[RMDB]
RNA sequence: GGGAACGACUCGAGUAGAGUCGAAAAAUACUUCUCAGGAUGGCGCGUUGCAGUCCAACAAGAUCCAGGGACUGUACAGAAUUUUCCUAUACCUCGAGUCGGGUUUGGAAUCUAAGGUUGACUCUCUAAAACUUUACGUGGUUCGCCACGUAAAGAAGUAUAUCUACUUGUUCGCAAGUAGAUAUACAAAAGAAACAACAACAACAAC
Reactivity to 2A3 in 0.01 (KOAc 150mM, MgCl2 10mM, bicine 150mM(pH8.5), 24C), signal-to-noise 4, nucleotides 027 to 156: a000u110a050c010u020u000c030u020c020a030g090g000a040u070g030g060c050g010c050g140u070u050g020c010a010g000u000c010c000a050a050c060a120a080g090a180u070c080c060a030g010g000g000a000c010u000g010u040a010c010a020g160a160a080u050u060u020u030c010c000u040a040u070a120c010c010u000c040g000a010g010u010c010g010g010g000u050u060u060g020g010a030a050u040c050u100a120a090g120g010u060u080g020a050c010u020c010u000c040u080a090a050a070a070c010u000u000u000a000c000g000u000g000g030u040u040c090g040c040c000a000c000g000u000a000a000a000g000a010a000
Reactivity to DMS in 0.01 (KOAc 150mM, MgCl2 10mM, bicine 150mM(pH8.5), 24C), signal-to-noise 2, nucleotides 027 to 156: a130u010a060c050u000u000c040u050c050a110g010g040a060u000g000g010c100g020c080g010u000u010g060c010a070g010u000c030c020a110a170c070a060a260g020a070u010c040c030a150g000g010g010a030c040u000g020u020a120c060a180g010a110a110u000u000u000u000c010c010u000a090u000a050c140c040u000c030g000a040g010u000c020g010g000g040u000u010u000g010g010a100a140u010c090u000a060a090g000g040u000u000g000a170c060u000c010u000c010u010a090a090a150a140c000u000u000u000a020c000g040u000g040g020u010u010c300g010c020c000a060c000g010u010a000a000a020g020a030a040